[RMDB]
An RNA of 177 nucleotides, treated with 2A3 and DMS and read out base by base. Reactivities are given for positions 27 through 126. The data come from the RNA Mapping Database (RMDB), libraries RFM100 and RFMREP. DMS adducts were read by reverse transcription with MarathonRT.

RNA sequence: GGGAACGACUCGAGUAGAGUCGAAAAAGCGUGCAGUACGCUGCACGCAACGGGAUGAGGAAGCCGAGGACACCUGAUGGAUGAUGACUCUUCGCUUCGCCGACCACGUAGUACUACGGUACUACGAAAGCAAUACAGUAUUCGUACUGUAUUGCUUAAAAGAAACAACAACAACAAC
Reactivity to 2A3 in 0.01 (KOAc 150mM, MgCl2 10mM, bicine 150mM(pH8.5), 24C), signal-to-noise 9, nucleotides 027 to 126: a000g000c000g000u010g000c000a000g010u040a030c260g030c090u000g000c000a000c000g000c000a000a000c010g020g000g050a140u150g060a130g150g020a030a020g040c120c040g020a010g000g020a020c010a030c040c030u140g120a180u270g120g090a080u120g030a050u080g070a120c030u000c000u050u020c020g000c010u010u010c020g020c040c000g010a020c000c010a040c020g000u000a000g000u000a000c000u000a010c170g090g000u000a000c000u000a000c000g020a030
Reactivity to DMS in 0.01 (KOAc 150mM, MgCl2 10mM, bicine 150mM(pH8.5), 24C), signal-to-noise 9, nucleotides 027 to 126: a080g010c000g020u000g000c000a010g020u010a100c260g040c000u000g000c000a010c000g000c000a010a010c060g000g000g010a120u010g020a180g000g000a030a020g020c090c060g010a040g000g000a080c040a050c030c010u000g010a160u020g020g010a110u010g010a090u010g000a140c180u000c010u000u000c080g000c010u000u000c010g000c000c000g000a170c020c020a270c010g010u000a000g000u000a000c000u000a110c150g030g010u000a000c000u000a000c010g000a030